[RMDB]
RNA sequence: GGGAACGACUCGAGUAGAGUCGAAAAUAUGAGGGCACAGUAAAUCCCGCAAGGAUGAGAAUGUGAUGUGGAAUGAGUAAAUCUAAGGUGAGGAGGCAUCCUCUUUAGUCCGCAAGACACUUGGUUGAAUUUCGCCAAGAUUCGUCUUGGCGAAAUUAAAAGAAACAACAACAACAAC
Reactivity to DMS in 0.01 (KOAc 150mM, MgCl2 10mM, bicine 150mM(pH8.5), 24C), signal-to-noise 4, nucleotides 027 to 126: u050a060u020g000a080g010g000g010c050a050c040a040g020u000a090a150a060u000c000c000c020g020c210a080a300g000g040a020u020g000a090g000a080a070u020g020u000g000a080u010g040u020g000g000a070a060u010g000a120g010u000a040a030a050u010c040u020a020a030g020g010u000g000a030g020g000a020g020g020c270a120u000c010c010u000c000u000u000u000a110g020u000c010c030g020c180a130a200g000a040c020a040c020u000u000g010g000u000u020g010
Reactivity to 2A3 in 0.01 (KOAc 150mM, MgCl2 10mM, bicine 150mM(pH8.5), 24C), signal-to-noise 2, nucleotides 027 to 126: u240a070u100g010a070g000g030g050c000a000c020a030g020u040a010a020a040u000c000c000c020g000c020a020a020g010g010a040u090g020a040g010a040a020u020g010u040g020a040u030g040u030g040g040a070a100u110g010a020g060u150a050a110a120u080c040u050a030a010g100g000u050g010a020g010g000a000g050g090c020a080u020c000c030u030c000u040u000u000a010g010u000c010c040g030c030a020a020g040a020c000a000c030u010u000g020g000u020u110g030

An RNA of 177 nucleotides, treated with DMS and 2A3 and read out base by base. The reactions ran in a buffer of 150 mM KOAc, 10 mM MgCl2 and 150 mM bicine (pH 8.5), at 24 C. Reactivities are given for positions 27 through 126.